[RMDB]
An RNA of 177 nucleotides, treated with 2A3 and DMS and read out base by base. Source: RMDB library OK2TRN, as collected in RNAgym.

RNA sequence: GGGAACGACUCGAGUAGAGUCGAAAAACUGGCUUGGCUGCAACUUCACUUUUACCCAGUUUAUGCAGUUUACGCCGCGUGGUUGCUGCUGCUUCUUCUGCUGAACCGUGGAACGGUGGAUUACACAGGGGUAAUAGAGGUUCGCCUCUAUUACCCCAAAAGAAACAACAACAACAAC
Reactivity to 2A3 in 0.01 (KOAc 150mM, MgCl2 10mM, bicine 150mM(pH8.5), 24C), signal-to-noise 1, nucleotides 027 to 126: a050c070u040g110g020c030u000u100g020g020c030u020g000c020a100a030c020u030u030c040a010c050u000u040u090u210a080c020c050c030a030g000u030u070u070a190u170g060c010a000g030u040u070u090a060c100g000c010c010g010c080g040u030g000g100u080u190g030c040u010g000c000u020g020c060u020u010c010u030u010c030u020g000c010u100g070a080a020c060c010g020u130g010g070a130a090c000g010g000u020g060g050a060u110u180a060c020a010c000a070
Reactivity to DMS in 0.01 (KOAc 150mM, MgCl2 10mM, bicine 150mM(pH8.5), 24C), signal-to-noise 1, nucleotides 027 to 126: a070c070u000g030g000c080u000u000g040g020c020u000g040c050a100a120c130u000u020c060a070c090u030u010u000u020a120c090c040c070a110g010u010u000u010a040u020g020c010a020g020u000u000u000a070c210g010c020c030g040c150g000u020g010g000u000u000g000c040u000g010c020u000g000c030u000u000c040u000u000c040u010g000c010u010g030a090a070c020c040g000u020g010g000a070a200c080g000g030u010g000g020a080u000u000a090c070a060c130a140

About this RNA:
The RNA was probed in 150 mM KOAc, 10 mM MgCl2 and 150 mM bicine (pH 8.5) at 24 C. For DMS, 1,333 sequencing reads were counted.